An RNA of 177 nucleotides, treated with DMS and 2A3 and read out base by base. For DMS, 981 sequencing reads were counted. It was measured as part of the RMDB library M2PK50. For 2A3 the reverse transcriptase was SuperScript II with manganese. Reactivities are rounded to 0.1 and cut off at 0 and 3. The 2A3 profile rests on 1,505 reads.
RNA sequence: GGGAACGACUCGAGUAGAGUCGAAAAGAACAUGCGUUCGCGCAUGUUCAAAUAAAAUCAGCGGUAAUCGAGGGGUAAAUAUUACCGCUGAACGCCUCGAUAAAAGAGCUGGCUUCGGCCAGCUCAACUUAUAUUUGCUCUUCGGAGCAAAUAUAAGAAAAGAAACAACAACAACAAC
Reactivity to DMS in 0.01 (KOAc 150mM, MgCl2 10mM, bicine 150mM(pH8.5), 24C), signal-to-noise 1, nucleotides 027 to 126: g000a040a020c000a000u000g010c000g060u000u010c200g020c010g040c000a010u000g000u000u000c000a040a080a070u010a060a070a180a050u010c000a010g000c000g000g000u010a000a020u000c240g000a110g010g000g000g030u000a060a070a180u010a060u010u010a020c000c000g010c000u010g000a010a030c180g010c020c000u020c200g010a140u000a030a140a120a200g000a000g010c010u000g000g000c000u000u010c250g000g000c000c000a000g000c010u000c000a000a010
Reactivity to 2A3 in 0.01 (KOAc 150mM, MgCl2 10mM, bicine 150mM(pH8.5), 24C), signal-to-noise 2, nucleotides 027 to 126: g010a000a000c000a010u010g020c020g010u000u060c190g000c020g000c130a000u000g020u000u020c000a000a000a000u050a000a020a000a120u040c000a000g000c010g010g010u010a020a010u080c100g070a170g020g130g040g030u050a030a110a070u070a030u020u000a000c000c000g020c000u000g000a000a000c030g060c000c000u050c070g050a050u100a300a140a060a070g030a000g010c020u030g000g000c010u050u100c260g090g000c000c000a010g000c000u000c000a000a000
About this RNA
Conditions: 150 mM KOAc, 10 mM MgCl2 and 150 mM bicine (pH 8.5), 24 C.